An RNA of 177 nucleotides, treated with DMS and 2A3 and read out base by base. For 2A3, 1,091 sequencing reads were counted. The reactions ran in a buffer of 150 mM KOAc, 10 mM MgCl2 and 150 mM bicine (pH 8.5), at 24 C. Source: RMDB library OK2TST, as collected in RNAgym.
[RMDB]
RNA sequence: GGGAACGACUCGAGUAGAGUCGAAAAAUGCGAUGGGAUCCUCGGACCAACACGGGAUCCAUUGAUGCUGUUAGGUGCGGUGUUCCGGGGAUCCGAUAGGAUCCAGCCAGCGGAUCCCAACCAACGGCCUGUGCAACUCAUUCGUGAGUUGCACAGGAAAAGAAACAACAACAACAAC
Reactivity to DMS in 0.01 (KOAc 150mM, MgCl2 10mM, bicine 150mM(pH8.5), 24C), signal-to-noise 2, nucleotides 027 to 126: a090u000g010c100g010a120u000g040g010g030a000u000c000c010u010c010g040g010a110c110c100a090a100c200a060c070g020g010g030a020u010c010c140a110u010u000g000a050u010g000c020u010g020u020u020a110g050g020u000g000c110g000g000u020g000u000u010c000c000g000g000g000g000a030u000c000c010g000a020u000a060g000g010a000u000c010c020a100g010c120c100a180g020c060g000g000a030u010c020c000c020a110a070c040c020a030a120c100g000g010
Reactivity to 2A3 in 0.01 (KOAc 150mM, MgCl2 10mM, bicine 150mM(pH8.5), 24C), signal-to-noise 1, nucleotides 027 to 126: a000u200g020c060g030a040u100g080g070g010a010u000c010c020u000c010g020g060a050c070c000a060a020c120a050c050g010g000g010a010u010c020c030a000u010u090g010a020u080g030c030u040g080u170u150a110g090g020u090g130c170g040g070u100g010u110u050c020c010g020g000g050g000a000u000c000c010g030a030u050a040g020g010a010u000c010c030a020g150c030c080a060g090c020g000g000a020u050c010c000c000a020a040c000c040a030a040c040g070g000